[RMDB]
RNA sequence: GGGAACGACUCGAGUAGAGUCGAAAACUGGAGAAGGGAGACUCGGGAACGCCUAGCAUCUGAGGGACGAAGCCGCCCCCGGGCGCUCCCCUCGGAGAUCCACUGGGUGGGUUCACAUCCCCAACCCUCACGGAAAGGUUCGCCUUUCCGAAAAGAAACAACAACAACAAC
Reactivity to DMS in 0.01 (KOAc 150mM, MgCl2 10mM, bicine 150mM(pH8.5), 24C), signal-to-noise 9, nucleotides 027 to 129: c070u020g000g000a050g000a090a060g010g000g010a030g000a080c070u020c070g010g020g020a020a020c120g010c010c000u050a070g000c150a120u000c020u000g020a020g000g030g010a100c130g000a090a210g060c080c030g030c060c030c020c100c120g030g010g000c020g000c040u020c040c000c030c010u000c000g000g000a000g000a080u060c070c080a060c060u000g000g010g010u020g040g000g010u010u010c070a080c120a150u020c040c010c000c000a050a150c030c010c010u010c110a170
Reactivity to 2A3 in 0.01 (KOAc 150mM, MgCl2 10mM, bicine 150mM(pH8.5), 24C), signal-to-noise 9, nucleotides 027 to 129: c030u050g040g020a030g010a070a070g010g010g000a070g020a030c020u030c080g010g010g010a040a010c020g010c010c010u020a030g020c020a110u020c010u030g020a030g010g010g000a010c080g090a070a010g050c110c030g040c020c020c000c010c020g030g000g000c040g010c010u020c000c000c000c000u000c010g000g000a030g010a060u080c050c030a040c080u030g010g020g020u050g010g080g010u070u070c050a050c010a110u080c010c000c000c000a020a110c010c010c000u030c040a060
An RNA of 170 nucleotides, treated with DMS and 2A3 and read out base by base. Values cover nucleotides 27 to 129. Reactivities are rounded to 0.1 and cut off at 0 and 3. 2A3 adducts were read by reverse transcription with SuperScript II with manganese. Conditions: 150 mM KOAc, 10 mM MgCl2 and 150 mM bicine (pH 8.5), 24 C. For DMS, 64,821 sequencing reads were counted.